[RMDB]
RNA sequence: GGGAACGACUCGAGUAGAGUCGAAAACUUAUAAUCUGCCUACUAUGUGUGACAUCAAACAAAUGUUGUUCUGCAUGGAAGUUGUAAACAAGUACUUCGAAAUCUAUGACGGUGGUUGUCUUAAUGCGUGUUGUAUUAUCUUCGGAUAAUACAACACAAAAGAAACAACAACAACAAC
Reactivity to DMS in 0.01 (KOAc 150mM, MgCl2 10mM, bicine 150mM(pH8.5), 24C), signal-to-noise 5, nucleotides 027 to 126: c020u000u000a050u000a140a120u010c050u000g020c040c020u000a130c020u000a030u000g010u000g020u000g010a050c030a030u020c030a030a090a140c290a060a180a150u000g020u000u000g020u000u000c030u010g000c020a010u000g000g010a100a050g000u000u000g010u020a060a080a130c270a030a040g010u000a060c090u000u000c020g010a030a090a050u000c040u000a010u010g000a300c300g000g000u000g010g020u000u000g000u000c020u000u000a060a080u010g010c300
Reactivity to 2A3 in 0.01 (KOAc 150mM, MgCl2 10mM, bicine 150mM(pH8.5), 24C), signal-to-noise 4, nucleotides 027 to 126: c010u010u030a020u070a160a090u070c020u040g040c010c010u030a100c000u020a040u020g030u000g020u040g020a020c000a010u020c030a020a050a290c040a100a140a100u150g000u020u010g010u040u020c010u020g020c000a010u010g000g000a020a000g000u050u040g120u130a060a070a010c030a060a020g010u020a080c040u010u010c010g050a080a100a120u000c010u010a020u040g010a020c000g010g040u040g020g050u030u030g140u110c000u040u220a170a070u110g060c050